[RMDB]
RNA sequence: GGGAACGACUCGAGUAGAGUCGAAAAAUACGGGGUAAGCUCGUCUGGCGAUGCGGGAUGAACCGAACGCAAAGUUAAAGUGCCAAAAUGCUCGCUCACCUAGAUACCAUAAAAGGUGUUGGUUCAUAUUUGACAUGUAGUUCGCUACAUGUCAAAUAAAAGAAACAACAACAACAAC
Reactivity to DMS in 0.01 (KOAc 150mM, MgCl2 10mM, bicine 150mM(pH8.5), 24C), signal-to-noise 2, nucleotides 027 to 126: a160u020a040c080g000g000g020g000u000a070a060g020c000u000c020g020u010c030u020g030g000c010g000a080u000g000c010g020g020g030a180u000g000a130a220c040c060g000a090a070c060g020c130a100a110a140g030u020u000a050a090a100g020u000g000c040c080a030a070a070a070u000g000c070u030c050g040c020u000c040a020c030c000u000a130g010a110u020a020c070c020a070u040a030a030a060a090g010g010u010g010u030u000g000g000u000u000c000a060u000
Reactivity to 2A3 in 0.01 (KOAc 150mM, MgCl2 10mM, bicine 150mM(pH8.5), 24C), signal-to-noise 3, nucleotides 027 to 126: a000u160a030c050g000g000g050g050u120a100a010g030c010u000c050g050u040c050u010g010g000c010g030a040u080g000c000g010g040g020a070u110g040a080a050c060c000g030a090a000c020g000c030a090a050a000g010u060u070a060a110a000g160u120g100c030c020a040a050a000a010u150g010c010u000c020g000c010u030c050a050c010c000u000a020g090a090u170a170c040c030a050u180a090a130a030a030g020g000u000g000u020u000g000g020u010u020c000a000u020
An RNA of 177 nucleotides, treated with DMS and 2A3 and read out base by base.
It was measured as part of the RMDB libraries RFM100 and RFMREP.
The reactions ran in a buffer of 150 mM KOAc, 10 mM MgCl2 and 150 mM bicine (pH 8.5), at 24 C.